[RMDB]
RNA sequence: GGGAACGACUCGAGUAGAGUCGAAAAACGAUGGUGUAACGGCGGCUGAACCGCUGGGACAACGUGCCGAACGCCAGACCGCCGAUGAUGGCGCCGAUGUUGUAGAUCACCACUAUCCACCUGGCGGCACUUUGUGACCCUUCGGGGUCACAAAGUGAAAAGAAACAACAACAACAAC
Reactivity to DMS in 0.01 (KOAc 150mM, MgCl2 10mM, bicine 150mM(pH8.5), 24C), signal-to-noise 2, nucleotides 027 to 126: a050c140g020a070u010g000g010u000g000u020a060a060c020g000g010c000g030g010c110u010g000a050a300c060c020g000c030u040g000g000g000a290c020a070a060c080g020u010g020c030c020g010a080a120c000g010c020c030a060g000a110c070c020g010c000c030g010a030u000g030a120u010g000g000c010g040c080c060g000a080u010g020u000u000g000u000a050g000a110u000c040a040c040c030a060c060u000a040u030c000c000a140c210c040u020g020g010c000g010g030
Structure probing data (DMS) for a 177-nucleotide construct. DMS adducts were read by reverse transcription with MarathonRT. The DMS profile rests on 1,053 reads. Reactivities are given for positions 27 through 126. The data come from the RNA Mapping Database (RMDB), library OK2TST. Conditions: 150 mM KOAc, 10 mM MgCl2 and 150 mM bicine (pH 8.5), 24 C.